Source: RMDB library OK3TST, as collected in RNAgym. The record gives the reactivity of an RNA of 207 nucleotides to 2A3 and DMS. For 2A3, 653 sequencing reads were counted. For DMS the reverse transcriptase was MarathonRT. The reactions ran in a buffer of 150 mM KOAc, 10 mM MgCl2 and 150 mM bicine (pH 8.5), at 24 C.
RNA sequence: GGGAACGACUCGAGUAGAGUCGAAAAUGGAUUUUCUGGUUUGGGAAUAUCUGGAUUGGAUUUGUAUUUUAAUUAGGGUUAAACUGUUUAUAGAUUCCAUUGUCUUACAGUAAAAUAAAACUAAAACAUUAAGGUGAAAUCACAACUGUGAUGUUCACUGAGGGUAUUAUUUCGAUAAUACCCUCAGAAAAGAAACAACAACAACAAC
Reactivity to 2A3 in 0.01 (KOAc 150mM, MgCl2 10mM, bicine 150mM(pH8.5), 24C), signal-to-noise 1, nucleotides 027 to 156: u090g020g000a000u030u070u060u070c030u150g090g010u040u120u110g050g000g000a050a080u010a020u020c010u080g120g040a150u070u040g040g000a020u070u170u010g040u090a100u010u150u030u140a120a110u060u040a060g000g030g000u000u030a040a130a020c010u010g020u020u140u000a210u100a030g020a010u150u080c060c000a050u020u180g020u000c000u020u020a000c010a060g020u060a030a030a070a100u110a000a050a020a050c010u070a020a000a180a120c020a060u060u180a040a000g050g000u020g030a000a040a000u000c000a000c030a290a050c050u020g030u030g060a010u050g110u090u090c030a010
Reactivity to DMS in 0.01 (KOAc 150mM, MgCl2 10mM, bicine 150mM(pH8.5), 24C), signal-to-noise 1, nucleotides 027 to 156: u000g030g010a160u000u000u010u000c000u030g020g010u000u010u010g030g010g000a120a080u000a040u000c030u020g010g050a060u000u000g010g000a080u000u010u000g010u010a050u000u030u000u030a030a110u000u000a150g010g010g020u010u000a110a110a110c020u000g010u000u000u020a090u020a060g000a120u000u010c030c190a100u000u000g000u010c020u010u010a060c020a050g010u000a020a080a080a090u010a010a060a030a100c030u030a030a070a070a050c050a040u000u000a070a050g010g010u000g060a010a020a070u000c000a050c000a020a160c040u000g010u000g000a030u000g000u000u000c030a090